[RMDB]
RNA sequence: GGGAACGACUCGAGUAGAGUCGAAAAGCAGUUCCAGAGUCUGUGGACUCUGAAUACUAGCGGUCAGUCGUCGUCCACAGACGACGUGAAGUGAUUAUGAGAAUGAUCACACUGACGACGUUUUCUCAAAUGUCCUAUCGCUAGGAACUGGAUAGGCUAAAUGAGGAGUCUUCGGACUCCUCAUUUAAAAAGAAACAACAACAACAAC
Reactivity to DMS in 0.01 (KOAc 150mM, MgCl2 10mM, bicine 150mM(pH8.5), 24C), signal-to-noise 1, nucleotides 027 to 156: g010c020a040g020u000u000c010c000a080g000a040g000u010c010u010g040u000g100g040a000c000u000c000u000g000a000a030u000a070c010u010a100g020c000g010g040u000c020a020g000u000c010g030u000c010g000u000c040c130a180c230a270g010a030c040g000a000c010g020u000g020a170a180g030u010g000a010u010u010a040u000g040a300g020a210a040u030g020a020u000c020a070c050a160c050u010g010a060c000g010a070c060g040u000u000u000u000c060u010c070a060a100a140u000g020u010c020c070u000a020u000c000g060c080u010a080g050g020a040a100c060u000g030g020a130u000a010g000g010c080
Reactivity to 2A3 in 0.01 (KOAc 150mM, MgCl2 10mM, bicine 150mM(pH8.5), 24C), signal-to-noise 1, nucleotides 027 to 156: g020c000a010g010u020u000c030c000a000g000a010g010u010c030u000g140u250g210g010a010c000u010c000u000g040a020a060u180a100c110u050a020g040c010g040g000u000c000a020g070u070c010g000u020c000g000u030c060c050a090c070a090g000a010c020g000a010c000g000u070g220a120a010g000u000g010a000u010u040a010u040g110a040g070a220a020u030g000a000u010c000a000c010a000c000u030g000a000c040g040a020c010g010u030u000u100u000c050u020c010a060a040a000u160g010u040c010c020u030a030u010c000g050c230u100a050g000g120a080a030c000u070g010g010a030u020a030g000g000c000